Chemical mapping of a 177-nucleotide RNA with 2A3 and DMS.
As a SHAPE reagent, 2A3 marks flexible, mostly unpaired nucleotides at the ribose 2'-OH.
The RNA was probed in 150 mM KOAc, 10 mM MgCl2 and 150 mM bicine (pH 8.5) at 24 C.
The DMS profile rests on 6,951 reads.
For 2A3, 3,909 sequencing reads were counted.
Source: RMDB library OK1LIB, as collected in RNAgym.
Reactivities are rounded to 0.1 and cut off at 0 and 3.

[RMDB]
RNA sequence: GGGAACGACUCGAGUAGAGUCGAAAAAUCGAUGUCCAGCAGGAAGAAUGGUCCGGUUUGGGCGGGUGUUAUUCGGCGCAGAUGGUAAUUGGGAUCAAGCGCUUGGCCCAUACCCGGGCCGUAGCGCGUACGCACUAGCGUUCGCGCUAGUGCGUACAAAAGAAACAACAACAACAAC
Reactivity to 2A3 in 0.01 (KOAc 150mM, MgCl2 10mM, bicine 150mM(pH8.5), 24C), signal-to-noise 2, nucleotides 027 to 126: a000u120c060g010a060u080g070u070c020c000a010g040c040a030g130g090a090a080g070a130a120u110g030g030u010c000c000g030g000u060u070u070g030g010g000c040g000g020g010u070g020u040u130a180u050u100c040g080g000c040g020c060a060g090a230u140g070g080u120a170a160u180u180g070g020g060a070u080c100a110a010g010c000g000c000u000u020g130g030c000c000c000a010u030a090c030c040c000g000g000g010c000c000g000u010a000g000c040g000c010
Reactivity to DMS in 0.01 (KOAc 150mM, MgCl2 10mM, bicine 150mM(pH8.5), 24C), signal-to-noise 3, nucleotides 027 to 126: a060u020c080g000a030u010g000u010c010c010a110g030c050a110g000g010a060a080g020a110a110u020g000g020u020c000c010g000g020u010u010u000g000g000g010c030g010g000g010u040g010u000u040a100u030u020c090g000g000c030g030c070a130g010a080u020g000g020u030a030a100u050u010g000g000g000a040u020c030a060a090g010c010g000c000u000u000g020g020c000c000c010a080u010a090c210c060c010g000g000g000c000c000g010u020a010g000c080g010c120